[RMDB]
RNA sequence: GGGAACGACUCGAGUAGAGUCGAAAAACAUACAAAUAACAUACUAUACUUAGUGUGAGCAAUAGCGAACAAUAAGUAAUACCACAGUGAGCAAUAGCGAACUGUCUACUGUCUGUAAACAGACUUAUAUGUUAUAUAAAUUCGUUUAUAUAACAUAAAAAGAAACAACAACAACAAC
Reactivity to 2A3 in 0.01 (KOAc 150mM, MgCl2 10mM, bicine 150mM(pH8.5), 24C), signal-to-noise 3, nucleotides 027 to 126: a000c020a030u300a080c070a090a160a060u260a180a000c030a070u230a060c030u180a080u000a120c010u020u010a010g000u010g000u000g010a020g020c000a090a300u040a300g000c010g010a010a000c010a030a000u000a010a000g020u040a050a040u070a090c040c050a010c000a000g010u000g000a010g000c040a070a300u070a260g010c000g050a030a000c010u000g010u010c020u140a140c050u060g030u020c010u030g050u090a100a110a020c010a010g020a020c000u040u050a130
Reactivity to DMS in 0.01 (KOAc 150mM, MgCl2 10mM, bicine 150mM(pH8.5), 24C), signal-to-noise 3, nucleotides 027 to 126: a050c070a080u010a140c060a060a090a080u020a150a150c090a140u010a090c080u010a100u000a030c020u000u000a000g010u000g030u000g010a300g040c000a160a120u010a080g040c030g010a180a040c000a040a070u000a010a010g020u000a030a100u010a070c180c170a030c010a010g000u000g000a300g000c030a150a090u010a080g010c020g010a200a020c030u000g010u010c140u000a050c150u010g000u000c000u000g010u040a070a080a190c050a020g000a050c020u000u000a110